The record gives the reactivity of an RNA of 207 nucleotides to DMS. For DMS, 2,218 sequencing reads were counted. The reactions ran in a buffer of 150 mM KOAc, 10 mM MgCl2 and 150 mM bicine (pH 8.5), at 24 C. DMS adducts were read by reverse transcription with MarathonRT.

[RMDB]
RNA sequence: GGGAACGACUCGAGUAGAGUCGAAAAAUUAUAAGGGCCAGACUACACAUGAGAGUUCUAGUGCUGUUAAUAUGCAGCAAAUACAUUUAAUUAGUAAGUUUUUAAAGGCAAACCCCAGUUGGAGUAACGCCGUAUUUAUUAGUCCUUAUAAUAGUCAUAGGCAAUAGAAAUUCGUUUCUAUUGCCUAAAAAGAAACAACAACAACAAC
Reactivity to DMS in 0.01 (KOAc 150mM, MgCl2 10mM, bicine 150mM(pH8.5), 24C), signal-to-noise 1, nucleotides 027 to 156: a050u000u020a060u000a010a070g040g000g030c010c030a180g010a140c030u000a060c040a030c050a070u000g020a240g010a050g010u010u030c050u000a080g040u000g090c000u000g010u000u000a030a150u030a100u000g010c000a030g000c000a060a050a120u000a060c000a080u000u000u000a060a190u010u000a110g000u000a060a230g000u000u000u000u000u000a000a080a080g030g030c030a120a180a100c020c020c000c030a260g000u000u010g050g030a110g010u000a020a140c130g030c000c010g010u000a030u000u010u010a130u000u010a010g010u000c010c000u000u000a050u000a000a020u020a140g000u000c070a250